[RMDB]
RNA sequence: GGGAACGACUCGAGUAGAGUCGAAAAGCGAAACGACCCACGUAAGUCUCCAUGUCCUCAAGCCGCCUCGGAGGACGAAGGAGUGGCAGGGCCUCCAGGUCCGCUAUUCGACCACAUGCCUUUUGGAGAUCCAAACUAAAUUCGUUUAGUUUGGAUCAAAAGAAACAACAACAACAAC
Reactivity to DMS in 0.01 (KOAc 150mM, MgCl2 10mM, bicine 150mM(pH8.5), 24C), signal-to-noise 8, nucleotides 027 to 126: g020c040g010a060a090a080c100g000a110c030c010c010a120c110g000u010a100a100g010u000c010u000c010c020a150u020g010u000c010c010u010c040a080a140g000c040c020g010c010c010u010c070g010g000a030g010g000a020c030g020a100a050g000g010a040g010u010g010g000c040a090g030g010g000c010c010u030c140c140a130g000g010u000c010c020g000c090u010a050u000u000c050g000a110c020c020a050c080a090u020g010c020c030u000u010u010u000g000g000a300
Reactivity to 2A3 in 0.01 (KOAc 150mM, MgCl2 10mM, bicine 150mM(pH8.5), 24C), signal-to-noise 9, nucleotides 027 to 126: g060c030g050a060a030a050c070g060a080c010c020c010a030c030g060u060a070a070g060u010c000u000c020c020a070u190g020u030c000c010u010c020a050a040g030c020c010g010c010c010u020c020g040g010a020g000g020a010c010g010a070a050g020g020a020g000u020g010g000c060a090g010g020g010c000c010u060c060c030a030g000g020u010c000c000g000c010u050a070u040u080c030g050a070c020c010a030c020a070u150g040c010c000u050u080u060u080g070g010a090